[RMDB]
RNA sequence: GGGAACGACUCGAGUAGAGUCGAAAACUGAGUGGAUGGACGAUUUUGAGGCGGAUCCUAAAGGCAAAUAUGCCCAGAAUCUGCUUAAGAAGUUGAUUGGCGGUGAUGUCACUCCAGUUGACCAAUAGAAGAGUAUGCUUCGGCAUACUCAAAAGAAACAACAACAACAAC
Reactivity to DMS in 0.01 (KOAc 150mM, MgCl2 10mM, bicine 150mM(pH8.5), 24C), signal-to-noise 9, nucleotides 027 to 129: c040u050g000a010g000u000g000g020a060u050g020g030a050c070g030a090u040u000u010u050g000a110g020g040c030g020g020a000u010c010c010u020a070a090a110g020g020c000a040a100a060u060a100u000g000c010c020c120a110g030a030a010u010c000u000g020c000u020u020a030a040g000a010a060g030u020u020g000a050u030u010g010g020c130g020g060u050g030a150u050g000u010c030a040c040u020c060c040a030g000u010u010g000a090c010c050a070a100u020a070g050a100a100
Reactivity to 2A3 in 0.01 (KOAc 150mM, MgCl2 10mM, bicine 150mM(pH8.5), 24C), signal-to-noise 9, nucleotides 027 to 129: c010u010g010a010g020u030g040g060a090u050g050g050a020c020g020a060u010u020u030u160g070a060g010g000c010g000g000a000u000c000c000u070a120a060a030g010g000c020a030a120a070u280a160u230g010c000c000c000a000g010a010a040u010c000u020g000c000u070u030a060a030g070a050a020g050u050u040g060a160u040u100g070g020c120g020g050u100g060a140u180g110u180c010a010c010u000c020c010a010g000u030u020g060a060c000c000a020a040u150a090g180a200a010